[RMDB]
Source information:
Structure probing data (2A3) for a 207-nucleotide construct. The data come from the RNA Mapping Database (RMDB), library ARCHII. For 2A3 the reverse transcriptase was SuperScript II with manganese.

RNA sequence: GGGAACGACUCGAGUAGAGUCGAAAAGCAGAAAUUUUAACUGCAAAAAACGAAAACUCUUUCGCUAUCGCUGCCUAAAAACCAGUGAUGCGUAGCUUAAUCUUGGUUGCUGGCGUCUGAGGUUAGGCCAUAAAAGGCCAGAUCGUACUGCUUCUUACCACUAUUACCUCUUCGGAGGUAAUAGUGGAAAAGAAACAACAACAACAAC
Reactivity to 2A3 in 0.01 (KOAc 150mM, MgCl2 10mM, bicine 150mM(pH8.5), 24C), signal-to-noise 2, nucleotides 027 to 156: g040c000a030g220a080a130a080u200u250u120u180a230a110c010u050g000c040a010a080a000a000a080a080c170g030a120a130a040a050c050u050c030u110u110u040c010g000c040u070a010u030c000g000c040u020g000c000c020u080a070a040a010a010a020c000c020a000g010u000g010a000u020g000c000g000u010a000g000c000u070u050a020a040u060c010u000u060g030g040u040u220g070c010u010g020g010c010g080u000c010u040g020a020g000g020u020u030a020g010g010c070c000a040u210a210a160a010a010g050g020c000c010a040g010a060u080c110g050u050a040c010u030g040c020u010u000c000u000u000a010